[RMDB]
RNA sequence: GGGAACGACUCGAGUAGAGUCGAAAAACACAAUGGACAAUCCGCAGCCAAGUCCUAAGGUGCAGGAGACUUCUCUCCUGCACUAUGGAUGCAGUUCAACGACUAGACGGUGAUGGGCUAGCGUAAUGAAUGCGUUCUGCACACUCUUACGCCGGCUGGUUCUCAUUGAGUUCGCUCAAUGAGAACCAAAAGAAACAACAACAACAAC
Reactivity to 2A3 in 0.01 (KOAc 150mM, MgCl2 10mM, bicine 150mM(pH8.5), 24C), signal-to-noise 1, nucleotides 027 to 156: a000c080a040c090a070a130u110g080g020a000c020a050a060u010c020c000g000c020a010g050c040c020a020a010g030u000c010c000u050a100a090g080g000u000g040c000a000g000g010a000g000a030c080u210u120c110u100c000u000c130c000u000g000c010a000c000u000a000u000g000g000a010u070g000c010a000g000u110u120c030a130a080c050g130a030c020u080a030g040a090c020g020g070u110g130a090u140g040g070g000c010u000a000g000c010g000u030a010a000u100g040a130a200u010g000c000g120u220u170c130u300g000c000a010c000a000c000u000c000u000u010a000c000g030c000c000g000g000c000u030